[RMDB]
RNA sequence: GGGAACGACUCGAGUAGAGUCGAAAAGACACGACGGAGACGUCGUGUCAAAGAGUGGGAAACCACUCAAAGAGCCACAGCUUCGGCUGUGGCUCAAGGCGCGGAACCGUCCGCGGAACAAAGGGAACCAUUAGGUAGGAUUCGUCCUACCUAAUGGAAAAGAAACAACAACAACAAC
Reactivity to DMS in 0.01 (KOAc 150mM, MgCl2 10mM, bicine 150mM(pH8.5), 24C), signal-to-noise 3, nucleotides 027 to 126: g000a010c000a000c000g020a010c000g000g000a300g000a280c010g020u000c010g010u010g000u000c000a030a050a120g000a020g040u000g020g000g000a160a090a210c000c000a000c000u000c010a030a070a080g010a020g000c000c000a010c000a010g010c010u000u010c280g010g000c000u010g020u000g000g020c000u000c000a010a030g010g010c040g010c010g000g010a040a200c140c100g010u000c000c000g040c000g010g000a070a090c150a010a060a070g010g010g020a150a250
Reactivity to 2A3 in 0.01 (KOAc 150mM, MgCl2 10mM, bicine 150mM(pH8.5), 24C), signal-to-noise 2, nucleotides 027 to 126: g000a000c000a000c020g020a000c010g020g020a080g050a040c010g000u000c000g000u000g000u000c000a000a000a010g000a010g000u010g000g000g000a030a020a060c010c010a000c000u000c000a030a020a000g000a000g000c020c010a000c000a030g020c020u090u160c300g090g000c020u000g010u000g000g020c020u010c000a000a000g010g000c020g010c020g000g030a070a120c060c000g200u090c010c010g050c050g020g060a030a020c040a040a030a020g070g020g020a020a060